[RMDB]
RNA sequence: GGGAACGACUCGAGUAGAGUCGAAAAAGUGACGUUUUCUGGACAAUAGCUUACACAUCGUACACUGAAGCAUUAGUACAAGUUGAAAACACAGCUAUUACAAAGGUGACGUAUUGUAAUAGUCACGUUAAUAACAUUAAAUGCUCUCAAAUUACUGUCACAACCAGCAUUUCGAUGCUGGUUGUGAAAAAGAAACAACAACAACAAC
Reactivity to 2A3 in 0.01 (KOAc 150mM, MgCl2 10mM, bicine 150mM(pH8.5), 24C), signal-to-noise 1, nucleotides 027 to 156: a030g040u030g000a030c010g010u000u070u050u000c080u080g010g030a020c090a150a120u040a100g010c040u120u140a020c010a010c010a110u130c030g100u060a080c010a000c030u040g000a000a000g020c050a040u020u020a060g010u080a140c090a140a040g020u000u000g110a070a070a000a020c030a050c030a030g000c000u000a000u000u020a000c000a000a010a010g000g060u100g150a010c110g150u170a190u000u000g000u000a000a010u010a000g000u030c060a040c030g000u030u000a060a020u080a070a000c020a000u300u000a010a100a000u010g000c030u010c020u000c030a000a050a080u100u080a060c080u010g000